RNA sequence: GGGAACGACUCGAGUAGAGUCGAAAAACAGGAGCGGUGCACUACGGUGCAACGCUCCUGAACUAGUCUUGCACACAAUGGUAAGCCAGUAGUAAUGACAGUGCAAGUAGGUUAUUACUAUAUUAAAAACAGUUUUAUCACUUCGGUGAUAAAACAAGCUAGUACUCUCGUUCGCGAGAGUACUAGCAAAAGAAACAACAACAACAAC
Reactivity to 2A3 in 0.01 (KOAc 150mM, MgCl2 10mM, bicine 150mM(pH8.5), 24C), signal-to-noise 1, nucleotides 027 to 156: a010c020a000g000g000a000g000c050g010g000u020g030c010a020c000u060a040c200g060g000u000g020c000a000a070c000g000c050u000c000c010u000g010a000a000c000u020a000g030u010c000u000u020g010c020a000c000a010c010a040a300u180g100g080u240a220a090g050c000c020a050g060u080a000g010u010a100a000u030g000a000c010a010g020u020g040c010a000a030g000u080a160g000g030u000u000a000u000u000a000c000u020a010u080a090u290u270a060a130a010a100a050c020a000g000u000u030u000u000a010u000c000a000c000u060u030c160g090g000u010g000a000u000a000a000a000a020c000a000a000

Overview: This 207-nucleotide RNA was probed chemically with 2A3. Reactivities are given for positions 27 through 156. Source: RMDB library M2RFPK, as collected in RNAgym.